[RMDB]
RNA sequence: GGGAACGACUCGAGUAGAGUCGAAAAGAGAAACCACAGCGUAGGGGUAACAGCUCUGUUGUGGAGAGCAGUGCAAGUCGUGCCAAUGGAAAGUAGAUUGGGGUGCAUUGUACACCGUAGAUUUAGCACUACGAAGGAAAUUCGUUUCCUUCGUAGUAAAAGAAACAACAACAACAAC
Reactivity to 2A3 in 0.01 (KOAc 150mM, MgCl2 10mM, bicine 150mM(pH8.5), 24C), signal-to-noise 2, nucleotides 027 to 126: g110a000g000a070a040a020c000c000a020c020a010g010c130g210u190a120g080g020g030g020u070a110a080c040a100g060c010u020c020u080g050u000u030g000u030g000g020a060g030a000g020c060a030g030u000g050c050a070a030g020u190c090g150u220g160c000c000a130a030u180g100g140a200a070a070g190u190a120g100a220u040u070g000g070g070g100u040g070c080a120u080u300g110u190a070c100a070c060c060g070u060a000g000a300u100u170u170a070g020c070
The data come from the RNA Mapping Database (RMDB), library OK1LIB. Chemical mapping of a 177-nucleotide RNA with 2A3. The RNA was probed in 150 mM KOAc, 10 mM MgCl2 and 150 mM bicine (pH 8.5) at 24 C. The 2A3 profile rests on 997 reads. For 2A3 the reverse transcriptase was SuperScript II with manganese.